[RMDB]
RNA sequence: GGGAACGACUCGAGUAGAGUCGAAAAGAAAAUAAGUGCGUAAUCGCGUCUUGACGUGAGUGAGCCCACACGAAGAGCUAUCCCAAGUGGGAUAGCAUAGCUCACAAUACGCUAAGAUUCGUGUGAAGAGUGGGUGCUCAUUCGUGAGCACCCACUCAAAAGAAACAACAACAACAAC
Reactivity to 2A3 in 0.01 (KOAc 150mM, MgCl2 10mM, bicine 150mM(pH8.5), 24C), signal-to-noise 2, nucleotides 027 to 126: g080a000a100a000a000u210a300a020g080u090g070c000g000u010a090a040u130c050g000c000g070u000c090u050u200g160a060c000g000u000g020a030g010u000g000a000g000c000c000c000a000c000a000c000g050a050a060g070a010g020c000u000a000u050c000c010c000a200a300g300u300g060g000g050a000u000a000g000c000a010u040a000g000c000u000c000a020c000a000a000u030a000c000g010c000u060a000a000g050a240u000u000c000g000u000g000u060g030a090a080
This 177-nucleotide RNA was probed chemically with 2A3. For 2A3, 789 sequencing reads were counted. It was measured as part of the RMDB library OK1LIB. The RNA was probed in 150 mM KOAc, 10 mM MgCl2 and 150 mM bicine (pH 8.5) at 24 C.